[RMDB]
RNA sequence: GGGAACGACUCGAGUAGAGUCGAAAAGCACAGACCAAUCAAGCAGGUGACUGGCAGUUAGGCAAUGGAUUGGUUGUUCCAAUGCCGCCGUCAUUUUAUGCUUAUUCUGCGAUUCCUGAUUGGGAUGACAUAGACGACCUUUCGAGGUCGUCUAUGUAAAAGAAACAACAACAACAAC
Reactivity to DMS in 0.01 (KOAc 150mM, MgCl2 10mM, bicine 150mM(pH8.5), 24C), signal-to-noise 2, nucleotides 027 to 126: g020c040a110c150a090g010a220c050c020a030a020u000c040a040a030g000c030a010g000g020u010g000a020c030u010g080g000c010a170g000u020u030a130g010g010c010a020a050u000g010g030a030u010u020g010g010u000u010g020u010u000c000c010a020a060u000g020c000c010g010c010c000g020u010c000a010u000u010u000u020a080u010g000c010u000u000a090u010u010c140u000g000c020g020a170u000u000c020c010u000g010a040u000u000g010g010g000a160u010g000
Reactivity to 2A3 in 0.01 (KOAc 150mM, MgCl2 10mM, bicine 150mM(pH8.5), 24C), signal-to-noise 2, nucleotides 027 to 126: g010c010a040c020a070g060a050c030c000a000a010u050c010a020a000g010c000a030g000g000u010g000a020c060u230g030g000c020a040g050u140u190a110g010g000c010a010a020u020g010g010a020u070u160g150g170u160u140g060u040u040c010c000a000a020u030g000c040c040g000c000c000g030u000c000a020u030u100u050u250a080u090g000c000u040u060a060u200u060c060u070g010c040g080a090u000u070c010c020u020g020a030u000u060g050g000g000a040u080g040